[RMDB]
RNA sequence: GGGAACGACUCGAGUAGAGUCGAAAAUCUUAGCGUUUCGACGCUAAGAAAACGUGGUGGAGGAGGUGGAAAGCUCGGCAUUAAAGGGAUAAAAACAUCAUCAUAUAGGGUCGUUCGCGACCCUAAAGCCUAUCUAACUCUUCGGAGUUAGAUAGGCAAAAGAAACAACAACAACAAC
Reactivity to DMS in 0.01 (KOAc 150mM, MgCl2 10mM, bicine 150mM(pH8.5), 24C), signal-to-noise 1, nucleotides 027 to 126: u000c000u000u000a000g000c010g030u000u000u040c200g040a020c000g020c010u030a000a000g010a000a040a060a040c200g020u000g000g030u010g000g040a110g040g010a090g000g000u000g000g000a090a070a170g000c060u000c110g010g000c130a130u010u030a020a120a130g020g000g010a070u000a020a040a070a080a070c130a040u000c070a070u000c090a060u010a110u000a010g000g000g000u000c010g000u000u010c130g010c030g010a010c000c000c000u000a010a000a010
Chemical mapping of a 177-nucleotide RNA with DMS. The data come from the RNA Mapping Database (RMDB), library M2PK50. The RNA was probed in 150 mM KOAc, 10 mM MgCl2 and 150 mM bicine (pH 8.5) at 24 C.